Structure probing data (DMS and 2A3) for a 177-nucleotide construct. For 2A3, 4,196 sequencing reads were counted. For DMS the reverse transcriptase was MarathonRT. In probing experiments dimethyl sulfate is read out at A N1 and C N3, which are open when not base-paired.
RNA sequence: GGGAACGACUCGAGUAGAGUCGAAAAUAAAAUAUAGUGAGACAAUCAAUCCUAUUGAAGAUCCCUCAGCUUUCGCCAAUGCAUUUAAACACUAUAUUAAGUAAGCAAUAGAGCAUCGAUUGAUUACCGUAUAUCCCCGAUUCGUCGGGGAUAUACGAAAAGAAACAACAACAACAAC
Reactivity to DMS in 0.01 (KOAc 150mM, MgCl2 10mM, bicine 150mM(pH8.5), 24C), signal-to-noise 3, nucleotides 027 to 126: u000a080a090a070a020u050a020u000a000g000u010g010a130g020a180c210a050a040u020c080a080a090u000c000c040u020a050u000u040g020a100a040g010a110u010c000c020c010u020c130a090g000c020u000u010u020c140g000c010c040a080a050u010g010c120a080u020u020u000a070a040a140c040a050c000u000a040u010a000u000u010a060a100g000u030a040a070g000c000a020a020u020a010g000a070g080c060a060u020c060g000a030u000u000g010a060u000u000a120c160
Reactivity to 2A3 in 0.01 (KOAc 150mM, MgCl2 10mM, bicine 150mM(pH8.5), 24C), signal-to-noise 5, nucleotides 027 to 126: u050a010a060a040a000u050a000u000a010g020u020g070a080g020a050c070a050a040u060c000a030a030u000c040c000u030a050u040u080g060a110a020g060a090u030c000c000c000u030c030a030g020c020u030u100u100c090g010c030c020a110a110u100g040c020a110u090u090u240a090a190a050c010a000c000u020a020u010a010u120u050a150a050g110u030a010a040g050c010a010a050u030a040g040a030g050c030a030u090c060g060a030u000u050g040a020u020u070a030c000
For DMS, 3,542 sequencing reads were counted. The reactions ran in a buffer of 150 mM KOAc, 10 mM MgCl2 and 150 mM bicine (pH 8.5), at 24 C.